[RMDB]
RNA sequence: GGGAACGACUCGAGUAGAGUCGAAAAGUGCCGCACCAAAGCAGCCGGUUUCUUCCACCUGCGGCAGUUCGAUACGCAGCCCGCUGACGUCCGCCAGCAUUUGCAUCCAGACAUCGGAAUGCGCCGGUAUUAUAAGAGUUUUCGAACUCUUAUAAUAAAAAGAAACAACAACAACAAC
Reactivity to 2A3 in 0.01 (KOAc 150mM, MgCl2 10mM, bicine 150mM(pH8.5), 24C), signal-to-noise 3, nucleotides 027 to 126: g060u030g020c010c000g020c020a040c030c080a110a070a050g030c040a020g030c050c040g060g040u060u110u020c010u060u000c020c030a040c020c020u030g010c000g050g000c000a010g040u060u090c020g020a050u040a190c060g000c040a020g060c040c020c010g000c050u000g030a050c020g080u020c010c020g030c000c010a010g010c010a040u120u090u150g000c010a020u010c010c010a050g080a200c020a090u120c080g020g020a100a040u040g030c020g000c020c010g040g010
Reactivity to DMS in 0.01 (KOAc 150mM, MgCl2 10mM, bicine 150mM(pH8.5), 24C), signal-to-noise 5, nucleotides 027 to 126: g020u010g010c030c030g010c030a090c080c090a070a120a150g000c080a100g000c040c030g000g010u000u000u000c050u000u000c040c040a090c100c060u010g000c030g000g000c040a050g010u010u000c070g010a090u010a070c100g000c030a080g010c060c050c050g000c020u000g000a090c060g010u000c050c070g020c040c020a050g010c030a110u010u000u010g010c050a090u010c050c050a110g000a110c140a050u010c060g000g010a060a040u000g010c100g010c050c040g010g000